An RNA of 177 nucleotides, treated with DMS and 2A3 and read out base by base. The DMS profile rests on 14,125 reads. 2A3 adducts were read by reverse transcription with SuperScript II with manganese.
RNA sequence: GGGAACGACUCGAGUAGAGUCGAAAAGCGGUCGCUAGCAUGGUCAGGAAGGUGAUGGCGGCAAUCACCCAUCCGUAAUGGAUGUUUCUCUGUGCGAGAAAACCGGCAAGGCGGGCUGAAAUCAUCAAUUAAAUUUAGCAUUCGUGCUAAAUUUAAUAAAAGAAACAACAACAACAAC
Reactivity to DMS in 0.01 (KOAc 150mM, MgCl2 10mM, bicine 150mM(pH8.5), 24C), signal-to-noise 8, nucleotides 027 to 126: g010c050g010g020u000c040g010c040u000a100g010c050a060u000g010g000u000c080a120g020g010a120a090g010g010u000g010a030u000g000g020c090g000g010c070a100a050u000c030a030c010c020c000a020u000c000c010g010u010a130a120u020g000g010a020u000g000u000u000u000c000u000c010u000g010u010g020c080g010a040g000a030a020a070a090c040c030g010g010c030a090a120g000g020c030g010g010g010c030u000g000a070a080a100u010c090a070u010c120a070
Reactivity to 2A3 in 0.01 (KOAc 150mM, MgCl2 10mM, bicine 150mM(pH8.5), 24C), signal-to-noise 4, nucleotides 027 to 126: g050c030g030g030u040c040g000c080u040a030g020c020a080u110g030g000u060c060a090g070g050a090a010g020g000u030g010a010u030g080g060c070g040g010c010a000a010u030c020a020c000c000c000a010u000c000c000g100u200a190a080u240g010g000a000u000g030u000u060u000c010u000c010u030g260u110g060c040g010a020g000a020a020a010a020c010c010g000g000c020a020a040g070g000c040g040g020g000c030u030g020a040a040a050u100c050a010u060c040a000